[RMDB]
The record gives the reactivity of an RNA of 177 nucleotides to DMS and 2A3.
The 2A3 profile rests on 975 reads.
For DMS the reverse transcriptase was MarathonRT.
Conditions: 150 mM KOAc, 10 mM MgCl2 and 150 mM bicine (pH 8.5), 24 C.

RNA sequence: GGGAACGACUCGAGUAGAGUCGAAAAGGUUGUACAUUAUUUUCCAUAAAAUCCUCUCUGAUUGAUGUGUAAAUUCGGGCGGUGUUGCAGCACCGCCCCCUUUCCGGAGGUACGAUCAUGAGUCGCACUAACAUAGAUCCUUCGGGAUCUAUGUUAGAAAAGAAACAACAACAACAAC
Reactivity to DMS in 0.01 (KOAc 150mM, MgCl2 10mM, bicine 150mM(pH8.5), 24C), signal-to-noise 3, nucleotides 027 to 126: g020g010u000u010g000u000a050c050a120u000u000a090u000u000u000u010c020c010a130u010a090a080a070a090u010c000c020u000c050u010c060u000g020a060u000u010g010a080u000g030u000g010u000a030a030a100u010u010c120g030g010g030c010g000g020u000g000u000u020g020c280a140g000c010a010c000c000g010c020c000c000c010c000u000u000u010c090c110g000g020a090g010g010u000a040c040g000a030u000c030a060u010g000a060g010u000c120g030c160a170
Reactivity to 2A3 in 0.01 (KOAc 150mM, MgCl2 10mM, bicine 150mM(pH8.5), 24C), signal-to-noise 2, nucleotides 027 to 126: g050g000u030u030g030u100a020c040a070u100u100a080u110u250u020u000c020c030a010u220a050a160a010a070u040c050c030u020c010u000c020u030g020a030u070u030g090a130u060g130u000g010u160a060a150a130u150u160c030g020g040g020c000g000g000u020g010u040u150g140c100a060g010c010a010c040c010g010c000c000c010c000c000u040u050u000c060c050g150g000a020g010g030u000a010c010g020a000u010c010a050u120g040a000g110u110c070g040c020a040